The record gives the reactivity of an RNA of 177 nucleotides to 2A3 and DMS. It was measured as part of the RMDB library OK2TST. For DMS the reverse transcriptase was MarathonRT. For 2A3, 668 sequencing reads were counted. In probing experiments dimethyl sulfate is read out at A N1 and C N3, which are open when not base-paired.

[RMDB]
RNA sequence: GGGAACGACUCGAGUAGAGUCGAAAAUUUGAUGAUCUUUUAAAUACAUAUUAGCAACAUAACUUACUACUUCGUUCACAUUCAUAUUACUUUGUGUACCGCUUCCUGUUUGCCAUACAACUAGUGGCAGAAGCAAGGGAUUCGUCCCUUGCUUCUGAAAAGAAACAACAACAACAAC
Reactivity to 2A3 in 0.01 (KOAc 150mM, MgCl2 10mM, bicine 150mM(pH8.5), 24C), signal-to-noise 1, nucleotides 027 to 126: u050u020u080g030a100u030g010a040u060c030u110u150u030u110a080a080a060u290a100c010a000u160a120u110u020a060g040c020a010a000c020a070u090a060a090c010u020u250a130c020u000a060c000u010u060c030g000u070u080c030a000c000a120u070u040c050a020u030a100u190u190a060c030u030u100u040g080u040g040u040a030c000c050g000c000u000u000c010c030u030g050u050u080u090g010c000c050a050u110a060c030a210a000c020u090a040g070u070g120g000
Reactivity to DMS in 0.01 (KOAc 150mM, MgCl2 10mM, bicine 150mM(pH8.5), 24C), signal-to-noise 2, nucleotides 027 to 126: u010u000u000g000a100u000g000a060u020c000u010u010u000u000a060a080a160u000a080c050a090u020a060u000u000a080g000c030a030a050c050a050u010a060a090c080u000u020a050c050u010a080c060u010u000c060g010u000u000c060a080c100a050u000u000c150a050u000a100u010u010a090c080u020u000u000g010u000g020u000a090c100c070g030c060u000u000c030c010u000g000u010u010u000g020c010c010a050u000a110c100a080a090c130u000a050g000u000g000g010